[RMDB]
An RNA of 207 nucleotides, treated with DMS and 2A3 and read out base by base. Conditions: 150 mM KOAc, 10 mM MgCl2 and 150 mM bicine (pH 8.5), 24 C. For DMS, 6,293 sequencing reads were counted. Values are in units of 0.01, from 0 to 300, in steps of 10.
RNA sequence: GGGAACGACUCGAGUAGAGUCGAAAAAUCUUGAGCAAGGUGUGGAAGAGGAGAUUGAGUUUUGCAACAACUUGACUAAGACUGUUUCAGAGAACCCAUUACCACUCAGCUGUUGGUCUGAAGUUCAAAAUUACAUUGAAGACAUAGGCUUUAACAACUUCAUGUCAAUUUUCGAAUUGACAUGAAGAAAAGAAACAACAACAACAAC
Reactivity to DMS in 0.01 (KOAc 150mM, MgCl2 10mM, bicine 150mM(pH8.5), 24C), signal-to-noise 3, nucleotides 027 to 156: a060u000c060u000u000g010a080g040c020a070a070g020g000u010g020u000g010g010a050a100g000a080g020g040a120g020a120u000u010g020a110g000u000u000u000u000g030c090a110a050c040a030a050c030u000u000g010a090c050u000a050a080g020a150c040u010g010u000u000u010c050a140g020a180g020a070a120c050c000c010a100u010u000a130c060c020a060c040u000c020a110g030c020u010g030u000u000g020g010u000c040u000g010a070a120g010u010u000c040a030a040a030a070u000u010a080c080a180u000u010g000a050a090g010a070c030a130u010a090g020g000c020u000u000u000a070a100c070a070a160
Reactivity to 2A3 in 0.01 (KOAc 150mM, MgCl2 10mM, bicine 150mM(pH8.5), 24C), signal-to-noise 5, nucleotides 027 to 156: a000u030c030u040u080g010a000g000c030a080a050g050g000u040g020u050g060g040a090a040g010a030g050g020a030g030a050u050u110g020a040g050u050u040u060u120g060c010a030a060c000a020a030c070u060u150g030a050c020u060a070a020g030a040c040u030g050u060u080u060c080a040g040a010g010a150a060c020c000c000a010u070u090a060c010c010a030c050u050c020a040g000c060u050g020u100u050g030g030u000c010u040g040a090a030g020u040u040c000a010a020a010a080u130u060a040c070a080u060u090g050a040a020g030a010c040a060u130a050g030g000c000u050u110u120a070a020c050a030a030